[RMDB]
RNA sequence: GGGAACGACUCGAGUAGAGUCGAAAAGCACGCCUCGCUAUCAAGAAUCUUUCGACCCGUGGCGCCUCGUACACCGUAGACGCUACGGCGCACUACUGGCUGCGGCCCGGCAUGAGCGUGCAGCUCAUAUGUCAUCGACGUUCGCGUCGAUGACAUAAAAAGAAACAACAACAACAAC
Reactivity to 2A3 in 0.01 (KOAc 150mM, MgCl2 10mM, bicine 150mM(pH8.5), 24C), signal-to-noise 2, nucleotides 027 to 126: g000c010a000c030g050c000c010u130c130g010c020u090a060u230c060a080a010g080a110a100u060c090u050u220u120c170g050a140c060c020c000g040u020g000g020c010g010c000c000u040c010g030u110a070c110a080c170c040g010u040a010g020a040c010g000c030u000a000c000g020g000c010g010c000a050c060u210a040c020u050g040g000c030u030g020c020g150g020c000c020c030g050g000c030a040u090g000a030g100c020g000u070g020c050a020g000c000u000c000a060
Reactivity to DMS in 0.01 (KOAc 150mM, MgCl2 10mM, bicine 150mM(pH8.5), 24C), signal-to-noise 2, nucleotides 027 to 126: g010c020a030c050g000c000c000u010c100g040c050u010a190u020c230a140a050g010a130a130u010c110u000u000u000c060g020a090c190c000c000g010u000g000g000c030g030c020c000u020c020g030u000a130c180a090c150c030g040u010a020g000a040c030g010c000u000a010c020g000g020c110g010c110a090c050u000a080c170u000g000g000c080u000g000c050g030g000c040c030c030g010g020c030a030u000g000a010g040c000g000u000g030c030a100g000c030u000c030a180